[RMDB]
RNA sequence: GGGAACGACUCGAGUAGAGUCGAAAAAAAAAGAUAUGGAUGCUUUGUCAGCUCUUAGUACCAGCAUCGAUCUCGGAAACGAGGGAGCUGAGAACUGAGCUUGGAUUUAAGCAUCCUAAGUCAAAAACACGUGUUUAUAGUUCGCUAUAAACACGUGAAAAGAAACAACAACAACAAC
Reactivity to DMS in 0.01 (KOAc 150mM, MgCl2 10mM, bicine 150mM(pH8.5), 24C), signal-to-noise 3, nucleotides 027 to 126: a040a020a070a090a060g010a060u020a300u000g000g000a010u000g000c000u000u000u000g000u000c010a030g010c000u020c000u000u000a040g020u000a100c120c010a000g000c000a290u000c150g020a020u010c000u010c010g000g000a160a090a120c000g010a010g010g000g010a020g010c010u010g000a010g010a110a130c210u010g000a000g010c010u000u020g010g010a010u000u020u000a000a020g020c010a000u000c000c000u000a010a060g030u010c010a050a070a100a070a130
Reactivity to 2A3 in 0.01 (KOAc 150mM, MgCl2 10mM, bicine 150mM(pH8.5), 24C), signal-to-noise 1, nucleotides 027 to 126: a010a000a000a040a020g070a060u110a030u130g000g000a010u000g000c010u000u020u020g000u040c010a000g000c000u000c010u010u010a000g010u020a010c000c000a010g000c020a140u300c060g050a100u010c010u010c000g040g020a140a080a070c000g010a010g000g020g010a010g010c000u000g000a000g010a040a000c030u030g000a010g040c020u020u090g100g000a060u300u270u180a010a000g000c000a000u020c000c000u010a050a000g030u010c030a010a000a000a100a100
The record gives the reactivity of an RNA of 177 nucleotides to DMS and 2A3. The RNA was probed in 150 mM KOAc, 10 mM MgCl2 and 150 mM bicine (pH 8.5) at 24 C. DMS adducts were read by reverse transcription with MarathonRT.